RNA sequence: GGGAACGACUCGAGUAGAGUCGAAAACGGGGGACCUAACAGGACAGAGGGUGAACGUAAAGGGGGUCACAGCAUCACAGCGCAGCCUCUGCCCAGAGAGCUGCCAGUCCUGGCUGGAACAGGAGGCCUGGGUCUACAGAUUCGUCUGUAGACCCAGAAAAGAAACAACAACAACAAC
Reactivity to DMS in 0.01 (KOAc 150mM, MgCl2 10mM, bicine 150mM(pH8.5), 24C), signal-to-noise 1, nucleotides 027 to 126: c070g000g000g000g030g020a130c110c020u000a120a150c120a070g010g020a010c140a060g030a010g010g030g020u010g010a090a070c090g000u000a040a120a230g000g040g010g000g020u020c070a090c070a040g000c120a010u010c070a020c100a140g000c150g040c020a020g000c020c010u000c020u020g020c100c060c090a160g000a000g000a080g000c010u000g000c000c070a040g010u000c000c010u000g020g020c040u000g000g010a050a060c100a040g000g000a070g010g000c090
About this RNA: An RNA of 177 nucleotides, treated with DMS and read out base by base. The DMS profile rests on 698 reads. The reactions ran in a buffer of 150 mM KOAc, 10 mM MgCl2 and 150 mM bicine (pH 8.5), at 24 C.